Source: RMDB library OK2TRN, as collected in RNAgym. Chemical mapping of a 177-nucleotide RNA with DMS and 2A3. DMS adducts were read by reverse transcription with MarathonRT. Conditions: 150 mM KOAc, 10 mM MgCl2 and 150 mM bicine (pH 8.5), 24 C.
[RMDB]
RNA sequence: GGGAACGACUCGAGUAGAGUCGAAAAACGUCUGAUGCGAUCCGUCGGCGCGGAUCGUCGUGAUCGUCGCUCGCGCGCCGGCGAUGCAUGCCUGUUUUGCCGCGGGUGAGAUCCGGAAUACCGGCGAACGUGAGGGUGGAUUCGUCCACCCUCACGUAAAAGAAACAACAACAACAAC
Reactivity to DMS in 0.01 (KOAc 150mM, MgCl2 10mM, bicine 150mM(pH8.5), 24C), signal-to-noise 2, nucleotides 027 to 126: a060c120g030u000c030u030g000a040u000g010c010g020a030u000c100c040g030u000c030g000g020c090g020c000g010g020a000u000c000g030u000c030g050u030g010a120u000c020g000u000c010g030c100u000c000g010c020g020c040g050c000c010g020g000c010g020a010u000g000c050a060u000g000c020c020u010g010u000u000u010u010g010c060c070g000c030g000g010g000u000g090a120g010a080u020c020c030g040g000a140a140u000a110c210c010g010g010c050g010a090
Reactivity to 2A3 in 0.01 (KOAc 150mM, MgCl2 10mM, bicine 150mM(pH8.5), 24C), signal-to-noise 1, nucleotides 027 to 126: a000c010g030u010c070u080g020a030u030g030c020g100a080u050c120c030g000u010c010g080g000c020g040c040g020g000a010u040c000g000u000c000g010u130g110a180u290c020g010u000c000g020c000u000c010g240c020g000c000g000c060c000g000g000c030g010a000u020g000c000a000u060g010c000c000u040g030u000u080u090u150g070c070c010g030c020g060g000g010u080g030a040g000a000u010c030c010g000g050a110a060u140a210c020c020g000g000c030g000a030